[RMDB]
RNA sequence: GGGAACGACUCGAGUAGAGUCGAAAAGAUAUGGACCCAGUUAGGGAGCUCUGUGUCGGAAACGACACCGAGCGACGAUCUAACGGGUCCUAAGUCAAAGCACGUUAUGCUUCGGCAUAACGUGCAAUCUGACUUCUUUGUUCGCAAAGAAGUCAGAAAAAGAAACAACAACAACAAC
Reactivity to DMS in 0.01 (KOAc 150mM, MgCl2 10mM, bicine 150mM(pH8.5), 24C), signal-to-noise 1, nucleotides 027 to 126: g030a060u020a150u000g000g000a000c000c010c000a160g020u000u000a010g040g010g000a130g040c000u000c000u000g030u000g020u000c000g010g020a080a050a020c000g000a000c000a010c000c110g000a000g020c000g000a060c300g010a100u000c010u030a000a000c020g010g000g020u000c000c000u020a000a050g000u000c030a130a140a140g000c000a000c000g010u010u000a000u000g000c000u010u010c210g060g000c010a000u000a010a000c010g020u000g010c000a020a020
Description
The data come from the RNA Mapping Database (RMDB), library TTRDES. Chemical mapping of a 177-nucleotide RNA with DMS. The RNA was probed in 150 mM KOAc, 10 mM MgCl2 and 150 mM bicine (pH 8.5) at 24 C. DMS adducts were read by reverse transcription with MarathonRT.